Chemical mapping of a 207-nucleotide RNA with 2A3. Values cover nucleotides 27 to 156. 2A3 adducts were read by reverse transcription with SuperScript II with manganese. For 2A3, 736 sequencing reads were counted. The data come from the RNA Mapping Database (RMDB), library ARCHII.
[RMDB]
RNA sequence: GGGAACGACUCGAGUAGAGUCGAAAAUGCCACUUUGUCACUAGUUUGUAUUAUGAGUUUCACACUCACUUCAAUGACGGUGAUAGAUACUACAUAUCACUCCUGCUUAGAGGGUCAUCUAAGCUAAACCAUGUGAAUAUAACCUUUCGGGCCUCGAUCGAGUAGAUUCGUUCGCGAAUCUACUCGAAAAAGAAACAACAACAACAAC
Reactivity to 2A3 in 0.01 (KOAc 150mM, MgCl2 10mM, bicine 150mM(pH8.5), 24C), signal-to-noise 2, nucleotides 027 to 156: u150g000c030c000a060c060u160u090u070g040u090c010a000c030u030a040g100u030u040u080g090u070a080u180u060a150u140g040a040g010u040u140u140c060a090c040a030c040u020c000a040c040u090u050c040a100a160u110g080a070c050g120g000u000g000a020u000a020g040a020u120a100c060u120a040c110a030u130a000u070c000a010c000u050c010c030u060g000c000u020u000a000g000a000g010g030g030u000c020a020u010c000u000a000a040g000c000u000a070a040a000c070c030a040u060g060u030g120a120a010u160a020u070a040a030c020c000u070u150u110c010g040g040g000c020c000u050c000g030a060